[RMDB]
An RNA of 207 nucleotides, treated with 2A3 and read out base by base. The RNA was probed in 150 mM KOAc, 10 mM MgCl2 and 150 mM bicine (pH 8.5) at 24 C. The data come from the RNA Mapping Database (RMDB), library OK3TST. 2A3 adducts were read by reverse transcription with SuperScript II with manganese.
RNA sequence: GGGAACGACUCGAGUAGAGUCGAAAAUGUGUGCGUGUGUGUGUCUGCAGGUGUGUGUGUGUCUGCAGGUGUGUGUGCGUCUGCAGGUGUGUGUGCAGGCAUGUGUGUCUGCAGGUGUGUGUCUGUGUGUGUCUUCAGGUGUGUGUGUGUCUGCAGAUCGAGUAUACCAUUUCGAUGGUAUACUCGAAAAAGAAACAACAACAACAAC
Reactivity to 2A3 in 0.01 (KOAc 150mM, MgCl2 10mM, bicine 150mM(pH8.5), 24C), signal-to-noise 2, nucleotides 027 to 156: u110g050u000g020u030g000c050g010u040g000u030g000u010g010u010g030u060c040u040g030c060a040g050g000u030g000u010g000u000g010u010g030u030g010u040c010u010g000c020a020g000g010u020g010u010g000u010g040u060g030c020g030u010c030u010g000c010a020g010g040u020g010u020g000u000g010u030g060c010a010g020g000c020a010u080g070u030g010u020g010u040c020u010g010c010a040g040g000u030g000u000g000u000g020u000c000u030g040u000g010u000g010u000g000u050c030u050u050c050a040g070g000u010g000u000g000u020g000u010g010u010g000u070c010u040g010c020a010g000a060